[RMDB]
RNA sequence: GGGAACGACUCGAGUAGAGUCGAAAAGGGGGAUCCCCGAGACGCUGGAGACGCCCGGGAACAAGGAAACAGAACAAGGAACGGUAGAAAAGAGCGAGCCUCCCGAUACGAGUUUGCCAGGACCUAUAUACAAGUUGAAGUUCGCUUCAACUUGUAUAAAAGAAACAACAACAACAAC
Reactivity to DMS in 0.01 (KOAc 150mM, MgCl2 10mM, bicine 150mM(pH8.5), 24C), signal-to-noise 1, nucleotides 027 to 126: g020g030g000g060g000a190u000c060c020c010c070g020a100g010a050c080g020c030u000g000g010a080g010a100c060g000c040c020c010g030g000g000a080a060c090a020a080g020g010a080a080a090c040a090g020a060a080c050a040a130g010g050a050a040c080g000g070u010a040g010a060a040a100a050g000a060g010c030g010a040g000c110c030u020c000c020c000g010a080u000a030c100g000a070g000u030u000u000g000c070c010a120g000g000a080c020c040u030a130u010
Source: RMDB library VIROID, as collected in RNAgym. Chemical mapping of a 177-nucleotide RNA with DMS. For DMS, 710 sequencing reads were counted. For DMS the reverse transcriptase was MarathonRT. High DMS reactivity at an A or C suggests that its Watson-Crick edge is free.